[RMDB]
RNA sequence: GGGAACGACUCGAGUAGAGUCGAAAAGAUAUGGAUAUAGGGAGAAGUCCAUCGGAAACGAUGGUCCUUCGACGAUCUAUGAUCCUAAGUCAAAAGGUCGUAGGGCGGUUCGCCGCCCUACGACCAACAGAUUUACACUGUUCGCAGUGUAAAUCUGAAAAGAAACAACAACAACAAC
Reactivity to DMS in 0.01 (KOAc 150mM, MgCl2 10mM, bicine 150mM(pH8.5), 24C), signal-to-noise 3, nucleotides 027 to 126: g000a040u000a300u000g000g010a010u000a030u000a010g020g000g000a050g010a030a010g000u000c000c000a010u000c000g020g000a120a090a180c000g010a010u000g000g010u000c300c010u000u000c010g020a050c200g010a040u000c010u000a020u000g010a020u000c000c010u000a070a190g010u000c050a070a090a140a140g000g020u000c000g000u000a010g020g000g070c000g010g030u000u020c250g000c000c000g000c000c000c000u000a000c000g000a010c000c000a000a040